Chemical mapping of a 177-nucleotide RNA with 2A3 and DMS. The DMS profile rests on 1,412 reads.
RNA sequence: GGGAACGACUCGAGUAGAGUCGAAAAUAAAAUAGCGUACUAGAGUCGCUGAUCUCUAGAUAACUACGAACUCUAGAGAUACGGUCCAAUUGAAUACAAGGACAGUUGGACCUAUUCGUAGAAAAAACAUCGUGAUAAAGUUCGCUUUAUCACGAUGAAAAGAAACAACAACAACAAC
Reactivity to 2A3 in 0.01 (KOAc 150mM, MgCl2 10mM, bicine 150mM(pH8.5), 24C), signal-to-noise 2, nucleotides 027 to 126: u170a000a070a020a050u150a020g010c010g020u020a020c020u020a020g060a050g070u070c010g030c030u020g050a100u010c010u020c000u000a040g020a160u090a080a070c010u040a000c020g020a000a010c010u020c030u020a000g000a000g040a060u040a110c100g010g000u010c000c000a000a010u000u010g020a080a010u150a250c130a100a070g170g040a040c000a010g000u000u000g000g000a000c000c000u020a070u000u030c010g020u010a010g000a060a100a000a000a000a030
Reactivity to DMS in 0.01 (KOAc 150mM, MgCl2 10mM, bicine 150mM(pH8.5), 24C), signal-to-noise 2, nucleotides 027 to 126: u010a050a060a080a120u000a030g040c010g010u000a050c010u000a020g010a080g010u010c010g020c040u000g000a110u000c040u000c020u020a070g000a060u010a070a100c010u000a020c020g000a050a130c190u000c000u000a000g010a180g030a100u000a070c140g000g040u000c010c010a000a010u000u010g000a090a120u020a110c300a070a110g010g010a300c020a000g010u000u000g010g010a010c020c020u000a030u000u000c020g020u000a000g030a000a020a080a030a010a080
About this RNA
The reactions ran in a buffer of 150 mM KOAc, 10 mM MgCl2 and 150 mM bicine (pH 8.5), at 24 C. Reactivities are rounded to 0.1 and cut off at 0 and 3.